[RMDB]
RNA sequence: GGGAACGACUCGAGUAGAGUCGAAAAGAUCUGAGCACCCAGAUCAAUCAGUUCGCCAUCUCGGACAUCGGCGGACUCGAUGUCUUGGUUAACAUCCUGGAGUGCAGCGACACCAAGUGCUGUUUGGCCAGUAUGCGGCUUUCGAGCCGCAUACUGGAAAAGAAACAACAACAACAAC
Reactivity to 2A3 in 0.01 (KOAc 150mM, MgCl2 10mM, bicine 150mM(pH8.5), 24C), signal-to-noise 1, nucleotides 027 to 126: g000a010u150c020u130g010a010g100c050a000c000c070c000a010g000a000u020c010a000a050u020c030a000g010u020u000c010g000c010c030a070u080c140u070c060g060g050a110c060a090u010c020g030g000c010g020g030a000c020u000c000g000a000u000g000u040c000u000u190g010g020u040u070a030a030c040a020u090c000c010u060g060g030a150g070u030g000c030a100g040c000g020a010c010a000c070c020a060a040g090u140g010c020u010g030u060u090u020g080g020